[RMDB]
RNA sequence: GGGAACGACUCGAGUAGAGUCGAAAACGGAACCUCUUUCGACAGGGACGAAAAGCAAGAGACAUUACCUGGAGAAGAAGCGCCGGCCAACUACGAGUCAGCAGCCGAGGAAAGUCGUAGGGCGCGAAAAAUUAAAUAUAUUCGUAUAUUUAAUUUUAAAAGAAACAACAACAACAAC
Reactivity to 2A3 in 0.01 (KOAc 150mM, MgCl2 10mM, bicine 150mM(pH8.5), 24C), signal-to-noise 3, nucleotides 027 to 126: c030g030g020a030a050c000c020u040c000u050u120u040c010g020a050c010a030g030g010g050a050c070g070a090a080a050a050g100c080a090a050g050a020g040a200c030a090u060u180a070c010c000u020g010g020a050g010a040a000g020a050a060g010c040g010c020c000g010g040c030c020a040a020c010u050a040c020g030a010g090u100c050a030g040c060a020g000c060c030g010a050g040g090a120a070a020g040u020c010g010u010a040g020g030g020c000g000c000g030a070
Reactivity to DMS in 0.01 (KOAc 150mM, MgCl2 10mM, bicine 150mM(pH8.5), 24C), signal-to-noise 4, nucleotides 027 to 126: c090g000g030a130a120c060c020u000c020u000u030u010c010g020a200c000a040g010g000g000a150c180g010a080a060a090a110g010c130a100a110g000a110g000a100c090a070u030u030a120c010c010u000g000g000a260g000a030a030g010a050a060g010c170g010c000c030g010g000c070c080a070a300c060u000a020c020g000a080g010u010c030a060g020c070a070g010c040c050g020a070g000g010a080a120a100g010u010c010g000u000a030g000g000g000c000g010c040g010a000
Structure probing data (2A3 and DMS) for a 177-nucleotide construct.
The DMS profile rests on 4,788 reads.
Values cover nucleotides 27 to 126.
For 2A3, 1,751 sequencing reads were counted.
DMS adducts were read by reverse transcription with MarathonRT.
2A3 is a SHAPE reagent: it acylates the 2'-hydroxyl of flexible nucleotides of all four kinds.
The data come from the RNA Mapping Database (RMDB), library OK1LIB.